[RMDB]
RNA sequence: GGGAACGACUCGAGUAGAGUCGAAAACAGCGGGGAUUGUUCACCGUGGUGAGUUUGUCUUCACGAAGGAGGCAACCAGCCGGAUUGGCGUGGGGAAUCUUUACCGGCUGAUGCGCGGCUAUGCCACGGUUAAUACCCAAUUCGUUGGGUAUUAACCAAAAGAAACAACAACAACAAC
Reactivity to DMS in 0.01 (KOAc 150mM, MgCl2 10mM, bicine 150mM(pH8.5), 24C), signal-to-noise 8, nucleotides 027 to 126: c070a150g010c060g010g000g000g010a120u010u010g010u000u000c070a070c020c020g010u000g010g020u010g000a100g010u000u000u000g020u000c000u010u000c020a140c220g020a170a210g010g000a020g010g010c010a030a040c080c050a100g000c000c000g000g010a140u000u000g010g000c040g010u000g000g010g000g000a180a100u010c110u010u000u010a130c020c010g010g010c010u000g000a080u000g010c090g010c070g000g000c030u000a090u010g010c010c010a040c090
Reactivity to 2A3 in 0.01 (KOAc 150mM, MgCl2 10mM, bicine 150mM(pH8.5), 24C), signal-to-noise 6, nucleotides 027 to 126: c030a000g040c040g010g020g000g040a100u070u150g070u150u080c030a040c080c020g010u020g000g050u050g010a070g010u000u090u110g010u020c010u010u020c020a070c190g110a220a130g010g010a010g000g000c010a010a020c010c010a010g020c010c010g020g010a060u040u080g030g010c070g030u100g010g000g000g030a030a050u040c000u050u080u060a190c020c000g040g010c020u010g010a050u080g020c130g000c010g060g000c020u060a060u210g020c010c020a010c020
An RNA of 177 nucleotides, treated with DMS and 2A3 and read out base by base. For DMS the reverse transcriptase was MarathonRT. The data come from the RNA Mapping Database (RMDB), library OK2TST. For DMS, 16,202 sequencing reads were counted.